[RMDB]
RNA sequence: GGGAACGACUCGAGUAGAGUCGAAAAGAAUCACCGUACCUAUUUAGGUUUACGCUCCAAGAUCGGUGGAUAGCAGCCCUAUCAAUAUCUAGGAGAACUGUACUAUGUUUAGAAGAUUAGGUAGUCUAUUACACAGCCAUGUUCGCAUGGCUGUGAAUCAUAAGAAAGUCUUCGGACUUUCUUAUGAAAAAGAAACAACAACAACAAC
Reactivity to DMS in 0.01 (KOAc 150mM, MgCl2 10mM, bicine 150mM(pH8.5), 24C), signal-to-noise 4, nucleotides 027 to 156: g010a130a090u000c020a260c010c010g020u000a060c020c010u010a150u010u000u010a050g040g020u000u010u000a050c060g000c000u000c020c010a090a100g020a030u000c070g060g040u000g010g000a080u000a080g010c070a240g000c140c100c000u000a060u000c020a080a130u000a090u000c050u000a150g010g010a120g000a070a080c040u000g010u010a060c040u000a080u000g010u000u000u000a120g010a090a150g010a080u000u010a050g010g020u000a100g000u000c050u000a100u010u000a210c010a020c000a010g000c000c010a020u000g000u010u000c300g020c020a020u000g010g010c010u000g020u010g000a020a100
Reactivity to 2A3 in 0.01 (KOAc 150mM, MgCl2 10mM, bicine 150mM(pH8.5), 24C), signal-to-noise 4, nucleotides 027 to 156: g030a020a030u110c010a010c020c000g020u050a020c010c000u090a170u240u210u300a050g010g000u030u020u030a020c030g010c010u020c000c000a030a000g000a030u050c020g030g050u030g050g050a030u030a020g090c110a020g010c040c000c020u070a060u080c050a070a090u050a000u170c010u020a020g000g010a010g010a030a020c050u060g020u060a020c010u030a030u120g070u040u090u020a090g040a200a030g010a130u110u050a040g000g070u010a020g060u040c030u040a100u100u080a080c000a000c000a000g000c000c000a000u000g030u030u060c100g000c100a000u000g000g000c000u000g000u000g000a000a000
Structure probing data (DMS and 2A3) for a 207-nucleotide construct. For 2A3, 2,970 sequencing reads were counted. The RNA was probed in 150 mM KOAc, 10 mM MgCl2 and 150 mM bicine (pH 8.5) at 24 C. The DMS profile rests on 8,970 reads. The data come from the RNA Mapping Database (RMDB), library M2RFPK. DMS adducts were read by reverse transcription with MarathonRT.